[RMDB]
RNA sequence: GGGAACGACUCGAGUAGAGUCGAAAAGGCGUACAGUACCGUUGACUAGAUUGUCGUCGAUGGUGUCGAUGGCGUUGUCGUGGUUGGCUAGCUGUGUGAGGAGCCGGUCUAUAUUGUCUAUCACUGGCUACUCCGCUAUUUUCGAAUAGCGGAGUAGAAAAGAAACAACAACAACAAC
Reactivity to DMS in 0.01 (KOAc 150mM, MgCl2 10mM, bicine 150mM(pH8.5), 24C), signal-to-noise 5, nucleotides 027 to 126: g010g020c010g020u000a070c070a070g000u010a040c080c060g020u010u000g000a030c030u010a190g010a140u010u010g010u000c090g030u000c020g010a030u000g010g020u010g000u000c000g010a090u010g010g000c010g020u000u000g010u000c040g020u000g000g000u000u000g000g010c040u000a150g010c030u000g020u000g010u000g000a100g010g000a160g010c010c020g000g000u000c050u000a090u000a090u010u000g010u010c070u000a100u010c130a070c060u000g010g010
Reactivity to 2A3 in 0.01 (KOAc 150mM, MgCl2 10mM, bicine 150mM(pH8.5), 24C), signal-to-noise 4, nucleotides 027 to 126: g060g010c020g020u060a020c020a020g020u030a040c000c050g030u020u060g010a010c020u040a070g040a300u100u230g070u120c040g000u000c010g010a020u050g130g110u110g050u060c020g040a110u060g020g000c020g020u030u090g030u010c080g030u080g010g060u080u080g050g000c010u010a030g030c020u020g040u040g040u070g120a110g040g030a020g020c010c020g010g000u000c070u000a150u030a080u120u220g050u030c030u060a080u120c050a020c060u030g090g020

An RNA of 177 nucleotides, treated with DMS and 2A3 and read out base by base.
Conditions: 150 mM KOAc, 10 mM MgCl2 and 150 mM bicine (pH 8.5), 24 C.
Reactivities are given for positions 27 through 126.
It was measured as part of the RMDB library OK2TST.
For DMS the reverse transcriptase was MarathonRT.